[RMDB]
RNA sequence: GGGAACGACUCGAGUAGAGUCGAAAAUGUUGGUGCUCGCACGAAGUUCAGCACACCUCACGGGUAUUCUGAAGCCUUGGAAACUCGUGUCAUUGAAAAGGACACCCCAAAAUUUGCGGCGAUGUCACAAGGUAGUGUAGUUCGCUACACUACCUUGAAAAGAAACAACAACAACAAC
Reactivity to DMS in 0.01 (KOAc 150mM, MgCl2 10mM, bicine 150mM(pH8.5), 24C), signal-to-noise 5, nucleotides 027 to 126: u000g010u000u000g020g020u010g010c020u000c090g030c070a100c120g010a090a110g020u000u010c070a040g010c060a060c080a110c060c030u000c020a020c050g020g010g010u000a120u000u000c010u000g020a050a110g010c160c180u000u020g010g000a030a020a020c010u010c020g000u000g000u000c100a090u010u020g010a070a070a080a170g000g010a020c040a060c050c020c010c030a040a060a050a140u000u000u010g000c100g010g000c080g030a070u000g010u000c050a160
Reactivity to 2A3 in 0.01 (KOAc 150mM, MgCl2 10mM, bicine 150mM(pH8.5), 24C), signal-to-noise 3, nucleotides 027 to 126: u120g010u030u060g050g020u060g030c040u040c090g010c040a070c110g110a170a040g010u100u090c020a000g000c010a010c010a010c000c000u010c000a020c010g000g000g000u150a300u130u000c030u060g100a210a130g120c010c110u050u070g040g000a020a050a010c010u000c030g000u030g020u020c040a090u030u220g060a100a080a050a070g090g010a010c000a040c030c030c000c040a000a040a050a170u170u150u090g020c070g000g000c050g070a110u070g040u010c010a010